Structure probing data (2A3 and DMS) for a 207-nucleotide construct.
Conditions: 150 mM KOAc, 10 mM MgCl2 and 150 mM bicine (pH 8.5), 24 C.
RNA sequence: GGGAACGACUCGAGUAGAGUCGAAAAUUCCAUUUGAGUAUCCUGAAAACGGGCUUUUCAGCAUGGAACGUACAUAUUAAAUAGUAGGAGUGCAUAGUGGCCCGUAUAGCAGUCAUUAACAUUCCUGAAAACGUGAAAAGGUUCGCCUUUUCACGAACGAAAGGACAAUCUUCGGAUUGUCCUUUCGAAAAGAAACAACAACAACAAC
Reactivity to 2A3 in 0.01 (KOAc 150mM, MgCl2 10mM, bicine 150mM(pH8.5), 24C), signal-to-noise 2, nucleotides 027 to 156: u070u020c000c010a000u170u030u090g020a050g020u090a040u140c010c040u010g010a000a000a060a100c050g000g000g010c010u160u090u070u070c070a040g010c000a020u030g000g070a080a020c000g050u070a020c040a050u200a070u170u300a140a160a120u200a090g110u000a040g050g000a010g010u030g000c020a040u040a090g050u060g010g000c000c030c050g010u020a040u000a010g000c000a000g030u060c000a010u000u030a000a060c010a040u010u060c000c000u010g010a060a080a040a040c040g010u010g000a010a000a000a000g000g030u020u090c150g070c000c000u000u000u000u000c010a000c000g000a000a000
Reactivity to DMS in 0.01 (KOAc 150mM, MgCl2 10mM, bicine 150mM(pH8.5), 24C), signal-to-noise 1, nucleotides 027 to 156: u000u000c010c000a110u000u000u000g000a110g030u010a080u010c050c000u000g010a020a040a040a090c060g040g070g070c070u000u000u000u000c040a110g000c160a080u000g010g010a110a020c040g020u000a070c110a100u010a110u000u000a060a040a130u000a140g010u000a040g010g030a120g020u010g010c000a010u000a110g000u010g000g010c000c000c040g050u000a050u010a080g020c070a070g010u000c020a080u000u000a110a050c060a070u000u000c030c010u000g000a050a110a090a130c010g030u020g000a020a000a040a010g060g020u000u020c300g030c030c010u000u000u000u000c000a020c000g000a000a060